[RMDB]
RNA sequence: GGGAACGACUCGAGUAGAGUCGAAAAGAACGAAACUUCGGUUUCGUUCAAAUAAUGCGUAGCUCGCGCUACGCAGGCAACGAGUAGGUCGUGCCACGUACAAAAGAUUUUAGUUCGCUAAAAUCAACAGUUAUCCUAUCUUCGGAUAGGAUAACUGAAAAGAAACAACAACAACAAC
Reactivity to 2A3 in 0.01 (KOAc 150mM, MgCl2 10mM, bicine 150mM(pH8.5), 24C), signal-to-noise 5, nucleotides 027 to 126: g000a010a000c010g010a020a000a010c020u070u110c190g060g000u000u000u010c000g000u000u000c000a000a000a000u110a020a060u070g000c000g000u000a000g000c030u030c140g130c020g000c050u000a000c000g000c010a000g000g010c020a110a140c010g010a010g080u200a100g150g300u050c010g010u010g000c010c030a060c070g110u140a080c060a080a110a020a020g000a020u020u010u030u040a020g000u010u070c200g000c090u020a000a020a010a010u020c010a070a020
Reactivity to DMS in 0.01 (KOAc 150mM, MgCl2 10mM, bicine 150mM(pH8.5), 24C), signal-to-noise 3, nucleotides 027 to 126: g000a010a000c010g020a010a000a010c000u000u010c180g030g010u000u000u000c000g010u000u000c000a010a090a050u010a080a130u010g020c000g000u000a010g020c010u010c300g000c270g010c000u000a000c000g000c000a010g030g020c040a020a050c040g010a070g010u010a160g020g040u000c010g010u000g000c000c000a120c210g000u000a070c220a060a090a080a060g000a000u000u010u010u000a020g010u000u010c180g000c000u000a000a010a010a010u000c010a060a140